[RMDB]
RNA sequence: GGGAACGACUCGAGUAGAGUCGAAAAGAGCUGCCCAGUCCAAGCUGUGAGUAAUUAGUGUUGAGUUGAGCGAAGGCUUGGCUCAUGCAGGUUCUAGAGUCGGAGGGUAAUGCGUGAGGCUGGCUUCACAGAGCAGCGACUACUUCCCGCUUACAGCGCUAACAAUUUUGUUCGCAAAAUUGUUAGCAAAAGAAACAACAACAACAAC
Reactivity to DMS in 0.01 (KOAc 150mM, MgCl2 10mM, bicine 150mM(pH8.5), 24C), signal-to-noise 2, nucleotides 027 to 156: g020a300g010c020u000g010c030c010c010a200g010u000c030c060a030a190g030c010u020g010u000g020a090g020u030a040a030u000u000a130g020u000g010u000u040g000a130g040u010u010g020a080g030c000g020a150a100g020g000c010u010u000g010g010c000u000c000a020u000g040c040a130g030g020u000u000c050u000a110g010a090g030u000c020g010g000a090g000g000g000u010a040a070u000g000c050g030u000g000a110g030g000c010u000g000g020c050u020u020c060a100c050a070g000a090g000c020a030g010c000g010a110c060u010a100c130u000u000c010c000c000g010c030u000u020a060c060a100g020c120
Reactivity to 2A3 in 0.01 (KOAc 150mM, MgCl2 10mM, bicine 150mM(pH8.5), 24C), signal-to-noise 4, nucleotides 027 to 156: g050a010g000c050u050g020c020c020c010a030g050u090c060c020a070a040g010c020u030g020u030g060a010g010u060a170a170u140u150a090g040u070g090u120u050g030a050g010u030u020g030a000g030c060g050a130a030g130g020c000u010u030g030g000c000u000c010a000u050g010c000a020g030g050u140u050c020u110a050g000a040g130u120c080g020g040a040g020g030g040u110a080a050u080g020c030g020u040g020a040g020g020c010u010g030g000c010u110u060c050a080c030a060g050a010g010c010a000g010c010g020a020c020u050a040c000u030u030c000c010c000g000c000u010u030a060c020a020g000c020
Chemical mapping of a 207-nucleotide RNA with DMS and 2A3. The DMS profile rests on 3,933 reads. Source: RMDB library ARCHII, as collected in RNAgym.